[RMDB]
An RNA of 177 nucleotides, treated with DMS and 2A3 and read out base by base. The reactions ran in a buffer of 150 mM KOAc, 10 mM MgCl2 and 150 mM bicine (pH 8.5), at 24 C. As a SHAPE reagent, 2A3 marks flexible, mostly unpaired nucleotides at the ribose 2'-OH. Reactivities are given for positions 27 through 126.

RNA sequence: GGGAACGACUCGAGUAGAGUCGAAAAGAUAUGGAUGUUGUAGGGAGCUGGUCGGAAACGACGCAGCGAGGAUCUAUUGACAUCCUAAGUCAAAAUCUAUUUUGGACCUUCGGGUCCAAAAUAGAAAGAUAAAACUUACGUUCGCGUAAGUUUUAUCAAAAGAAACAACAACAACAAC
Reactivity to DMS in 0.01 (KOAc 150mM, MgCl2 10mM, bicine 150mM(pH8.5), 24C), signal-to-noise 3, nucleotides 027 to 126: g000a040u000a300u000g000g010a020u000g020u000u010g000u000a010g000g010g000a030g050c000u000g010g000u000c000g020g010a130a090a230c010g010a010c010g010c000a000g010c000g000a040g020g010a020u010c010u000a010u000u020g040a000c000a010u000c000c000u010a030a090g010u010c030a090a090a130a110u000c000u010a000u000u000u000u000g000g010a030c010c000u000u010c220g030g020g010u000c000c000a000a000a000a020u000a000g000a000a030a080
Reactivity to 2A3 in 0.01 (KOAc 150mM, MgCl2 10mM, bicine 150mM(pH8.5), 24C), signal-to-noise 2, nucleotides 027 to 126: g030a010u060a030u170g000g000a010u010g000u030u010g030u000a020g020g000g020a000g030c000u000g000g010u010c010g000g030a070a080a040c040g020a010c180g020c300a000g000c000g010a040g000g020a010u000c000u010a020u150u300g010a000c010a010u000c000c000u010a090a000g050u010c020a010a000a000a290u000c000u000a000u010u000u010u010g000g000a010c000c000u000u070c300g110g000g000u000c010c000a000a000a000a000u000a000g020a000a000a000